RNA sequence: GGGAACGACUCGAGUAGAGUCGAAAAUGAGAACCUCACCUCCAGCGAGGAGGACUUCUCCUCUGGCCAGUCCAGCCGCGUGUCCCCAAGCCCCACCACCUACCGCAUGUUCCGGGACAAAAGCCGCGCCAGUCGUAGUAUUCGUACUACGACUGGCAAAAGAAACAACAACAACAAC
Reactivity to DMS in 0.01 (KOAc 150mM, MgCl2 10mM, bicine 150mM(pH8.5), 24C), signal-to-noise 1, nucleotides 027 to 126: u020g000a060g070a130a050c080c050u000c110a100c060c010u000c040c060a140g000c080g010a050g000g000a030g010g000a100c190u010u020c000u000c000c090u000c010u000g030g030c100c020a070g020u000c020c040a140g010c000c030g010c070g000u000g020u000c040c020c000c100a100a160g000c030c010c000c050a100c050c010a050c050c050u000a060c030c000g040c070a020u010g000u020u000c040c040g000g000g030a010c100a060a090a110a140g010c050c030g000c090

This 177-nucleotide RNA was probed chemically with DMS. The RNA was probed in 150 mM KOAc, 10 mM MgCl2 and 150 mM bicine (pH 8.5) at 24 C. Values are in units of 0.01, from 0 to 300, in steps of 10. It was measured as part of the RMDB library OK2TRN.